[RMDB]
RNA sequence: GGGAACGACUCGAGUAGAGUCGAAAAGAUUUAAACAGAUGGAGAUACACAAAUGUUUGAAUCCCAGUAACAAAAAUCCUGGUAUCUCGGGUAUACAGUAGUGCAGAUACUGUAUUUAUAAUGCUCCUUAGGUUUUCCAUCUUCGGAUGGAAAACAACAGGUCUAUAAUCUUCGGAUUAUAGACCUGAAAAGAAACAACAACAACAAC
Reactivity to 2A3 in 0.01 (KOAc 150mM, MgCl2 10mM, bicine 150mM(pH8.5), 24C), signal-to-noise 2, nucleotides 027 to 156: g000a000u040u020u010a000a010a000c000a000g040a050u040g000g020a010g010a010u020a000c000a000c020a020a100a030u010g000u000u000u030g030a050a050u020c030c020c040a090g070u210a150a150c100a130a240a010a000a030u050c000c000u000g000g010u000a000u000c030u030c000g000g000g000u010a000u000a000c000a010g040u040a000g090u050g270c070a030g070a200u030a050c000u000g020u010a000u000u010u010a080u030a150a080u100g020c030u140c070c020u050u090a120g040g040u000u000u000u000c000c000a000u000c020u030u070c300g060g000a000u000g000g000a000a000a000a000c000a010a010
Reactivity to DMS in 0.01 (KOAc 150mM, MgCl2 10mM, bicine 150mM(pH8.5), 24C), signal-to-noise 1, nucleotides 027 to 156: g010a100u000u000u010a050a000a070c020a050g000a220u000g000g000a050g010a110u000a060c060a190c030a070a160a260u000g000u010u000u020g010a020a050u000c000c010c070a200g020u030a090a150c060a020a040a100a140a170u000c040c080u010g010g030u000a010u000c000u000c000g020g010g030u000a060u000a010c010a020g060u000a010g080u010g060c110a210g020a150u000a030c010u000g020u000a000u010u010u000a100u000a130a120u010g010c020u000c020c010u010u010a160g030g010u010u000u000u000c000c010a020u000c000u000u010c280g010g040a000u010g000g000a000a000a010a010c000a160a200